[RMDB]
RNA sequence: GGGAACGACUCGAGUAGAGUCGAAAAAACAGACGGUUCGCCGUCUGUUCUAUGCGGCUGAGGGUUUCCGGACGUGGGUUCGUUUCCCACCGCCUCCACCAAUGUAAGGAUCGUUCGCGAUCCUUAACCUAACAUUGGACUUCGGUCCAAUGUUAGGAAAAGAAACAACAACAACAAC
Reactivity to 2A3 in 0.01 (KOAc 150mM, MgCl2 10mM, bicine 150mM(pH8.5), 24C), signal-to-noise 1, nucleotides 027 to 126: a010a010c000a000g000a000c000g000g040u010u090c180g010c080c010g000u010c000u000g000u000u000c000u050a080u110g030c010g000g040c040u060g090a110g000g000g000u010u070u050c040c000g050g030a070c090g060u180g080g160g070u060u070c020g030u040u090u060c010c000c000a000c000c040g030c010c030u000c020c000a080c020c000a050a040u170g080u090a020a040g000g000a010u000c000g000u060u040c220g000c000g070a000u000c000c000u010u010a020a010
Reactivity to DMS in 0.01 (KOAc 150mM, MgCl2 10mM, bicine 150mM(pH8.5), 24C), signal-to-noise 2, nucleotides 027 to 126: a000a000c000a000g010a000c000g010g010u010u010c190g020c000c000g000u000c010u000g000u000u000c020u000a080u010g000c040g020g000c100u000g010a100g000g010g010u000u010u000c110c040g010g000a030c080g030u000g020g000g020u010u000c080g000u000u000u000c000c010c000a130c050c060g020c020c010u000c020c020a090c110c120a080a050u010g030u020a030a010g000g010a000u000c000g000u000u010c210g020c010g010a010u000c000c000u000u000a030a100
Structure probing data (2A3 and DMS) for a 177-nucleotide construct. The DMS profile rests on 2,912 reads. Conditions: 150 mM KOAc, 10 mM MgCl2 and 150 mM bicine (pH 8.5), 24 C. For DMS the reverse transcriptase was MarathonRT.